[RMDB]
RNA sequence: GGGAACGACUCGAGUAGAGUCGAAAAGGGCAGCGAAGGCGCUGCCCCUGCCGGAGUUCCUGGACCUGAAGCGGGGGCCCAACUACAAAAUCAGCUCGGCAUCCUCAACGGCUUACUCGGACCGACUAUAUCCACUUAUUUUCGAAUAAGUGGAUAUAAAAGAAACAACAACAACAAC
Reactivity to DMS in 0.01 (KOAc 150mM, MgCl2 10mM, bicine 150mM(pH8.5), 24C), signal-to-noise 5, nucleotides 027 to 126: g040g000g030c010a000g030c010g020a210a130g000g010c050g040c010u000g000c000c000c000c010u000g020c080c030g010g010a120g020u000u010c020c010u010g010g010a090c070c030u010g020a090a090g010c050g010g000g020g020g000c040c010c050a050a090c100u020a090c130a060a060a090a090u050c070a080g010c040u000c080g000g000c040a060u000c010c010u010c070a080a160c060g010g000c030u000u010a050c020u000c030g000g000a060c040c020g000a100c130u000
Reactivity to 2A3 in 0.01 (KOAc 150mM, MgCl2 10mM, bicine 150mM(pH8.5), 24C), signal-to-noise 9, nucleotides 027 to 126: g020g010g000c010a010g000c040g100a210a120g260g070c070g000c020u010g010c000c000c000c000u030g000c010c010g040g030a080g020u050u050c020c020u040g030g050a080c010c020u060g050a090a010g050c050g010g010g010g020g010c000c010c000a040a050c020u160a050c040a040a110a030a100u140c040a010g030c020u020c020g020g000c010a040u070c000c020u060c030a070a060c020g010g000c010u020u040a020c010u020c010g020g020a030c010c010g010a020c030u020